[RMDB]
RNA sequence: GGGAACGACUCGAGUAGAGUCGAAAAAAUGGCACUGCAGAGCUGAUGGGCCAUGUACCUAUCCAAAAUGAGAUCCCAUCUUGCACACUGUGCUAAUUUGAGAUUCUCAUGCCUCCUACUUGGAUAGACCGCAUGCCCAGCUUCGGCUGGGCAUGAACUAUCAACCGACAUUCGUGUCGGUUGAUAGAAAAGAAACAACAACAACAAC
Reactivity to 2A3 in 0.01 (KOAc 150mM, MgCl2 10mM, bicine 150mM(pH8.5), 24C), signal-to-noise 3, nucleotides 027 to 156: a000a000u060g010g000c080a070c160u100g030c060a060g050a080g200c100u120g040a190u090g010g040g010c010c000a010u030g030u040a060c000c010u000a020u020c000c000a030a060a010a050u010g000a010g000a020u010c000c000c000a010u000c000u020u020g020c000a010c020a080c170u220g010u010g010c020u050a030a070u020u000u010g010a010g010a020u270u080c000u000c010a000u070g080c010c030u110c020c020u090a140c080u030u030g000g010a010u010a010g030a030c000c090g010c020a000u000g000c010c010c010a000g000c000u030u050c140g090g000c000u010g000g000g000c000a000u000g000a000a010
Reactivity to DMS in 0.01 (KOAc 150mM, MgCl2 10mM, bicine 150mM(pH8.5), 24C), signal-to-noise 2, nucleotides 027 to 156: a070a000u010g010g000c000a100c040u000g050c040a100g010a170g030c070u000g000a070u000g010g020g070c040c010a040u000g010u000a100c150c040u000a070u000c020c040a050a040a120a050u010g010a020g010a100u000c000c020c000a010u010c070u000u030g020c000a020c020a200c110u000g000u000g000c000u020a020a020u000u000u000g010a060g070a040u000u000c000u000c010a040u000g000c050c000u010c040c030u000a130c160u020u000g000g010a060u000a060g010a100c030c030g000c000a010u000g010c000c000c000a010g030c010u000u000c300g040g010c000u000g020g010g020c030a000u000g000a020a090

Conditions: 150 mM KOAc, 10 mM MgCl2 and 150 mM bicine (pH 8.5), 24 C. An RNA of 207 nucleotides, treated with 2A3 and DMS and read out base by base. For 2A3 the reverse transcriptase was SuperScript II with manganese.